[RMDB]
RNA sequence: GGGAACGACUCGAGUAGAGUCGAAAAGAUAUGGACUUGUCGUAGGGAGGUGCUGGUCGGAAACGACCAGGCACCUUUGAUCUACACAAGUCCUAAGUCAAAAGUAAAUCACUUCGGUGAUUUACAACAUCUAGGGGUAGUUCGCUACCCCUAGAUGAAAAGAAACAACAACAACAAC
Reactivity to 2A3 in 0.01 (KOAc 150mM, MgCl2 10mM, bicine 150mM(pH8.5), 24C), signal-to-noise 1, nucleotides 027 to 126: g000a040u030a020u110g010g000a020c010u020u040g010u110c290g000u030a010g060g110g120a110g010g010u040g000c000u010g010g030u030c030g030g000a010a040a050c000g000a010c000c000a010g070g070c020a000c000c000u000u080u060g000a010u050c000u000a010c000a000c000a020a000g000u000c000c000u010a010a000g000u000c040a000a030a150a110g030u010a000a010a020u000c010a010c010u080u180c300g130g020u000g000a000u050u030u010a000c010a040a010
Reactivity to DMS in 0.01 (KOAc 150mM, MgCl2 10mM, bicine 150mM(pH8.5), 24C), signal-to-noise 3, nucleotides 027 to 126: g010a060u000a300u000g000g000a030c020u000u000g000u010c300g050u020a000g010g020g000a040g020g030u000g020c000u000g000g010u000c000g010g000a080a060a200c000g020a030c000c000a010g000g010c000a000c000c000u000u000u010g010a070u000c000u000a020c010a020c000a000a000g000u000c000c000u000a010a090g010u010c020a120a120a150a160g000u000a010a010a020u000c000a000c000u000u010c180g030g020u000g000a000u000u000u000a000c010a110a190